[RMDB]
RNA sequence: GGGAACGACUCGAGUAGAGUCGAAAACGUGGGAGGGCCGUCGCUCAACGGAUAAAAGGUACUCCGGGGAUAACAGGCUGAUCUUGCCCAAGAGUCCACAUCGACGGCAAGGUUUGGCACCUCGAUGCCAAUACCUGGACUUCGGUCCAGGUAUUGGAAAAGAAACAACAACAACAAC
Reactivity to DMS in 0.01 (KOAc 150mM, MgCl2 10mM, bicine 150mM(pH8.5), 24C), signal-to-noise 6, nucleotides 027 to 126: c090g010u020g020g000g000a070g000g000g000c020c020g000u010c040g000c080u000c060a090a070c060g000g010a100u030a060a080a090a070g000g020u000a050c090u000c020c080g020g010g000g000a140u010a070a080c210a080g020g000c050u020g000a030u010c010u010u000g010c010c000c020a070a300g000a030g010u020c130c100a080c180a110u010c000g000a300c300g010g010c010a050a010g000g000u000u010u020g020g000c050a080c050c000u000c050g010a100u030g000
Reactivity to 2A3 in 0.01 (KOAc 150mM, MgCl2 10mM, bicine 150mM(pH8.5), 24C), signal-to-noise 7, nucleotides 027 to 126: c070g020u080g030g040g030a100g020g040g010c020c000g040u030c020g020c050u060c040a060a030c030g020g000a030u140a070a140a020a010g100g020u060a050c030u010c030c000g000g000g000g010a100u130a160a020c010a060g180g000c010u010g020a030u010c010u040u030g000c000c000c000a040a010g010a000g050u110c060c010a110c040a200u040c000g010a020c010g000g000c010a010a010g020g000u030u090u090g030g000c020a020c010c000u030c020g020a040u110g040
The data come from the RNA Mapping Database (RMDB), libraries RFM100 and RFMREP.
This 177-nucleotide RNA was probed chemically with DMS and 2A3.
For 2A3 the reverse transcriptase was SuperScript II with manganese.